[RMDB]
RNA sequence: GGGAACGACUCGAGUAGAGUCGAAAAAGCCACGCUGUGUUUGUGUGGGAUCUGCUCCUUCACCACCUUUCUUGCCCCUCUCUGCUUCAGUGUUUGCAUUCCCAGAGCCUGGGUGAUCAGGACUGAGAUCUAGAAGGGACUUCGGUCCCUUCUAGAUAAAAGAAACAACAACAACAAC
Reactivity to DMS in 0.01 (KOAc 150mM, MgCl2 10mM, bicine 150mM(pH8.5), 24C), signal-to-noise 2, nucleotides 027 to 126: a110g010c010c030a040c070g030c040u000g020u010g000u000u000u000g000u010g020u010g010g010g020a060u010c070u000g020c090u000c010c030u000u000c050a120c090c050a080c060c050u000u000u000c040u000u000g020c040c020c020c030u010c030u000c030u010g000c010u000u000c050a060g010u010g010u000u000u010g030c090a130u000u010c030c010c010a190g000a130g020c050c010u000g000g000g000u010g000a120u000c020a050g010g000a100c080u010g010a110g000